[RMDB]
Structure probing data (DMS and 2A3) for a 177-nucleotide construct. DMS adducts were read by reverse transcription with MarathonRT.
RNA sequence: GGGAACGACUCGAGUAGAGUCGAAAACGUGUCUGGUAACACAUUAAAAUAGAAUCGUAAUCAAGCAAUCAGUCCUUUAUAUUUUCCUCCUAGUGAGUAUCUGGAAAACAGGUGCAGAAAUGGAUCAUAAACCGAUCAGAUUCGUCUGAUCGGUUUAAAAAGAAACAACAACAACAAC
Reactivity to DMS in 0.01 (KOAc 150mM, MgCl2 10mM, bicine 150mM(pH8.5), 24C), signal-to-noise 4, nucleotides 027 to 126: c200g000u000g010u010c010u000g000g000u010a090a050c060a040c100a080u030u010a030a020a070a080u060a080g010a060a030u010c080g020u010a060a090u010c110a060a090g000c080a080a050u020c070a100g000u000c020c010u010u030u000a060u040a090u020u010u000u000c000c030u000c020c020u000a060g010u030g000a160g020u000a000u000c010u010g000g000a100a040a090a130c070a020g000g000u010g000c020a060g000a100a050a070u010g030g000a090u020c100a090
Reactivity to 2A3 in 0.01 (KOAc 150mM, MgCl2 10mM, bicine 150mM(pH8.5), 24C), signal-to-noise 3, nucleotides 027 to 126: c050g020u030g020u010c010u100g130g040u170a080a000c010a000c020a040u120u290a050a080a080a160u220a060g100a070a030u070c060g020u120a010a040u100c080a010a040g030c000a020a030u010c010a030g040u030c000c010u060u190u020a180u000a050u100u070u030u040c010c020u040c010c010u020a030g040u010g130a010g020u030a020u000c020u040g000g040a110a050a060a050c020a000g020g000u000g010c010a010g110a020a070a050u150g060g000a060u070c020a050
The reactions ran in a buffer of 150 mM KOAc, 10 mM MgCl2 and 150 mM bicine (pH 8.5), at 24 C.
It was measured as part of the RMDB libraries RFM100 and RFMREP.